[RMDB]
RNA sequence: GGGAACGACUCGAGUAGAGUCGAAAAGACAGCUUCGGCUGUCGGGCGUCCUAAGUCCAUCUGAGGCGUUUGUCAGCUCUGUGUCGGAAACGACAUUGAGCUUGGAUUUAACGCUCCCCACCAGAUGGAUAUGGAAAUAUGCGUCAUUCGUGACGAAAAAGACACGAUAUUUCGAUAUCGUGUCUUUAAAAGAAACAACAACAACAAC
Reactivity to 2A3 in 0.01 (KOAc 150mM, MgCl2 10mM, bicine 150mM(pH8.5), 24C), signal-to-noise 3, nucleotides 027 to 156: g010a000c020a000g020c020u120u100c240g210g000c010u000g000u010c030g000g080g020c100g060u020c020c000u040a140a030g000u000c000c000a000u000c000u000g020a000g030g010c010g000u020u000u020g020u010c020a000g010c010u000c000u010g000u000g000u000c000g050g010a120a080a030c020g000a010c000a000u000u030g000a010g000c000u010u050g010g000a020u080u290u300a000a010c000g000c020u070c040c010c000c000a040c010c000a010g000a000u000g020g000a010u010a040u030g010g090a070a060a020u230a090u230g080c000g020u020c020a070u110u120c160g090u050g020a020c050g060a100a150
Reactivity to DMS in 0.01 (KOAc 150mM, MgCl2 10mM, bicine 150mM(pH8.5), 24C), signal-to-noise 3, nucleotides 027 to 156: g020a000c000a030g020c000u000u010c300g070g020c000u000g040u000c020g000g010g020c090g020u010c020c010u010a110a200g010u000c000c000a000u000c010u020g030a300g030g000c010g030u000u000u000g000u000c000a050g000c000u010c010u000g030u000g000u000c000g000g010a180a070a300c010g020a000c010a030u000u000g010a010g020c000u000u000g010g020a030u000u000u000a020a010c010g010c000u000c300c100c040c040a300c190c010a040g000a020u000g010g020a040u010a100u000g010g000a100a100a100u000a070u000g010c000g000u000c010a080u000u010c220g000u010g020a020c010g010a030a130
The record gives the reactivity of an RNA of 207 nucleotides to 2A3 and DMS. It was measured as part of the RMDB library RNAMAK. 2A3 adducts were read by reverse transcription with SuperScript II with manganese. The DMS profile rests on 6,179 reads.